[RMDB]
Structure probing data (DMS) for a 177-nucleotide construct. Conditions: 150 mM KOAc, 10 mM MgCl2 and 150 mM bicine (pH 8.5), 24 C.
RNA sequence: GGGAACGACUCGAGUAGAGUCGAAAAGAUAUGGAGUUAGAAGCUUGGAUUUAAUUCCUUGGAGCGAGUAUAUCGGAAACGAUAUACGAGCUCCAAGGAAUUUGUCAGCUUACUAACUCCUAAGUCACAUAUGACUAAGGUUCGCCUUAGUCAUAUGAAAAGAAACAACAACAACAAC
Reactivity to DMS in 0.01 (KOAc 150mM, MgCl2 10mM, bicine 150mM(pH8.5), 24C), signal-to-noise 3, nucleotides 027 to 126: g010a070u010a300u010g000g010a020g010u000u010a000g010a060a030g010c010u000u000g030g020a020u010u010u000a010a010u000u000c000c000u000u000g010g020a040g010c020g000a300g020u000a000u000a010u000c010g030g010a220a110a240c010g010a000u000a000u000a000c010g020a300g000c000u000c000c000a000a000g010g000a010a000u000u000u000g010u000c000a000g000c000u000u000a100c010u000a000a020c000u000c000c010u000a020a080g000u000c050a260